[RMDB]
RNA sequence: GGGAACGACUCGAGUAGAGUCGAAAAGGGACGAAGCCGCCCCCGGGCGCUCCCCUCUGUCCACCUUCGAGGGGGUUCACACCUCCAGGCGGCGGGCCGGCUACUCUUCUUUUCCUUUUCUCGUCUUGACCGCGGAACUUCGGUUCCGCGAAAAGAAACAACAACAACAAC
Reactivity to 2A3 in 0.01 (KOAc 150mM, MgCl2 10mM, bicine 150mM(pH8.5), 24C), signal-to-noise 3, nucleotides 027 to 129: g020g010g010a000c030g050a130a020g000c010c000g020c000c000c010c020c000g020g000g020c070g020c040u110c000c020c020c000u010c020u090g110u030c060c040a120c000c060u030u160c060g050a120g000g010g000g000g010u110u130c020a000c000a030c030c000u030c040c000a090g020g060c000g030g000c020g000g000g000c160c030g040g000c010u060a070c000u000c000u220u190c000u020u040u030u000c010c000u020u000u020u060c020u020c020g070u010c040u040u060g080a070c020
Reactivity to DMS in 0.01 (KOAc 150mM, MgCl2 10mM, bicine 150mM(pH8.5), 24C), signal-to-noise 4, nucleotides 027 to 129: g030g000g000a040c140g030a150a120g030c080c020g060c140c040c040c040c120g080g070g030c140g070c050u080c030c050c100c100u000c060u060g040u100c080c060a160c110c050u040u040c210g060a170g010g050g000g030g020u020u110c200a210c270a170c060c000u010c060c030a010g000g000c030g000g020c080g100g000g020c300c130g020g100c000u030a200c270u030c080u050u010c010u030u010u010u040c040c080u010u000u000u090c010u000c010g030u020c040u020u100g050a230c060
Structure probing data (2A3 and DMS) for a 170-nucleotide construct. Conditions: 150 mM KOAc, 10 mM MgCl2 and 150 mM bicine (pH 8.5), 24 C. Source: RMDB library 15KLIB, as collected in RNAgym.